[RMDB]
RNA sequence: GGGAACGACUCGAGUAGAGUCGAAAAGAUAUGGACAUCGCUACCCACCCACUAUUGUCAGUAUCGUUCUGUCGGAAACGACAGAACGUACUUGGAUUUAUAGUGGAGGCGAUGUCCUAAGUCAAAACUCUUAACCUGCUUCGGCAGGUUAAGAGAACAUCCUACAUUUGUUCGCAAAUGUAGGAUGAAAAGAAACAACAACAACAAC
Reactivity to DMS in 0.01 (KOAc 150mM, MgCl2 10mM, bicine 150mM(pH8.5), 24C), signal-to-noise 2, nucleotides 027 to 156: g000a110u000a160u010g040g010a020c000a000u010c000g030c000u000a100c010c040c040a300c210c000c000a030c010u000a010u010u000g010u010c000a030g020u000a000u010c040g000u000u000c000u000g040u000c000g000g000a190a100a300c000g020a020c000a020g000a000a000c000g000u000a000c000u010u020g030g020a040u000u020u000a020u000a000g020u010g000g010a260g020g030c020g010a040u000g010u010c010c000u000a000a060g020u000c070a040a060a060a140c000u010c000u000u000a000a010c000c000u000g040c000u000u010c300g070g020c000a010g020g000u000u000a010a010g000a000g010a020a090
Reactivity to 2A3 in 0.01 (KOAc 150mM, MgCl2 10mM, bicine 150mM(pH8.5), 24C), signal-to-noise 5, nucleotides 027 to 156: g120a080u240a130u290g000g000a000c000a010u000c000g000c020u120a300c000c000c020a030c000c000c000a010c000u000a000u010u030g010u010c010a000g000u010a050u300c050g000u000u000c000u000g010u000c010g030g060a110a080a090c010g000a000c000a000g000a000a000c000g010u000a000c000u000u030g090g000a000u110u300u090a010u050a000g000u010g000g000a000g010g000c000g000a000u000g000u000c000c000u000a020a000g060u030c070a030a020a080a180c000u000c000u000u000a000a000c000c000u000g000c010u050u090c190g090g000c000a000g000g000u000u000a000a000g000a000g000a000a000